[RMDB]
Conditions: 150 mM KOAc, 10 mM MgCl2 and 150 mM bicine (pH 8.5), 24 C. Structure probing data (2A3 and DMS) for a 177-nucleotide construct. For 2A3 the reverse transcriptase was SuperScript II with manganese. Values cover nucleotides 27 to 126.
RNA sequence: GGGAACGACUCGAGUAGAGUCGAAAACGAAGUGCGGCGACACGGAUGUCAAGCAAGAGGGCUGGGUGCAUACGCAGACCGGCAAGUACGAGCACUAUCACUGCGGCGGCUGUGGUGGCUGGAGCCGCUUAAGGUGCUUCUUCGGAAGCACCUUAAGAAAAGAAACAACAACAACAAC
Reactivity to 2A3 in 0.01 (KOAc 150mM, MgCl2 10mM, bicine 150mM(pH8.5), 24C), signal-to-noise 3, nucleotides 027 to 126: c020g020a090a020g060u020g060c030g070g010c040g030a030c020a000c070g070g030a040u090g060u090c040a000a070g030c030a050a070g040a060g100g080g000c020u040g050g040g000u060g010c060a050u100a170c060g000c040a000g070a250c010c000g020g070c020a070a000g050u040a060c060g020a030g030c020a010c040u100a120u120c050a030c080u040g010c020g080g000c040g010g030c010u040g010u040g110g000u030g000g010c030u020g050g040a000g010c030c020g050
Reactivity to DMS in 0.01 (KOAc 150mM, MgCl2 10mM, bicine 150mM(pH8.5), 24C), signal-to-noise 5, nucleotides 027 to 126: c080g020a100a090g010u010g010c050g010g010c040g010a130c070a060c110g010g010a090u000g000u000c060a090a150g010c060a060a080g010a120g010g000g020c040u000g010g000g020u000g010c080a130u000a070c150g010c030a050g000a080c060c040g000g020c040a060a070g020u000a050c100g010a170g000c050a060c070u000a070u010c050a070c080u000g010c080g010g000c070g010g010c010u000g020u000g000g000u000g000g000c050u010g010g010a110g000c020c030g010